An RNA of 177 nucleotides, treated with DMS and 2A3 and read out base by base. It was measured as part of the RMDB library VIROID. The RNA was probed in 150 mM KOAc, 10 mM MgCl2 and 150 mM bicine (pH 8.5) at 24 C. For 2A3, 2,189 sequencing reads were counted. The DMS profile rests on 3,665 reads. 2A3 adducts were read by reverse transcription with SuperScript II with manganese.

[RMDB]
RNA sequence: GGGAACGACUCGAGUAGAGUCGAAAAAGGAGUAAUCCUAAACAGGGUUUUCACCCUUCCUUUAGUUCCCUUCCUCUCCUGGAGAGGUCUUCUGCCCUAGCCCGGUCUUCGAAGCUUCCUUUGGCUAUCAUUACAGCUAGUUCGCUAGCUGUAAUGAAAAAGAAACAACAACAACAAC
Reactivity to DMS in 0.01 (KOAc 150mM, MgCl2 10mM, bicine 150mM(pH8.5), 24C), signal-to-noise 4, nucleotides 027 to 126: a020g010g010a050g010u010a130a080u010c040c020u010a060a080a080c290a040g000g010g000u000u000u000u020c200a070c030c010c020u000u000c020c010u000u010u010a140g010u000u000c000c000c000u010u000c000c000u000c020u000c020c090u010g010g000a060g000a050g010g000u000c020u000u000c030u010g010c020c020c020u000a120g000c030c030c130g000g010u000c050u000u000c070g010a110a100g010c100u000u000c040c020u000u000u000g000g010c130u000a110
Reactivity to 2A3 in 0.01 (KOAc 150mM, MgCl2 10mM, bicine 150mM(pH8.5), 24C), signal-to-noise 2, nucleotides 027 to 126: a000g050g000a030g000u080a080a070u120c020c030u070a060a020a010c150a020g030g020g010u050u130u280u290c070a050c000c010c000u010u030c000c000u000u020u050a030g010u020u050c000c000c000u000u120c020c010u040c010u040c010c120u070g050g050a060g000a010g000g060u030c020u110u000c010u050g000c000c000c010u010a040g000c010c000c020g060g050u000c040u040u040c060g090a070a030g040c000u050u070c020c030u060u100u090g070g000c000u040a070